[RMDB]
RNA sequence: GGGAACGACUCGAGUAGAGUCGAAAAACAGGUCGAUUCGUCGACCUGUACAUUGCGGCCGCGCCGGGUCGUUCCCGCGCGAAACCCGCCGCGGCCGCGCGCUUACAAACGGAUUCGUCCGUUUGAAUAUAUGAUUACCCUUCGGGGUAAUCAUAUAAAAAGAAACAACAACAACAAC
Reactivity to DMS in 0.01 (KOAc 150mM, MgCl2 10mM, bicine 150mM(pH8.5), 24C), signal-to-noise 2, nucleotides 027 to 126: a030c010a000g010g010u000c000g000a010u000u010c150g010u000c000g010a020c010c010u010g000u000a010c140a110u010u010g020c000g030g000c010c000g000c140g010c170c000g020g000g010u000c020g010u000u010c000c000c010g000c050g010c060g000a050a060a110c030c030c040g050c140c020g040c050g000g000c020c030g000c000g010c190g000c120u000u000a210c010a000a010a010c000g000g010a020u000u010c160g010u000c000c000g010u000u000u000g000a110a110
The record gives the reactivity of an RNA of 177 nucleotides to DMS. For DMS, 1,949 sequencing reads were counted. DMS adducts were read by reverse transcription with MarathonRT. It was measured as part of the RMDB library M2PK50.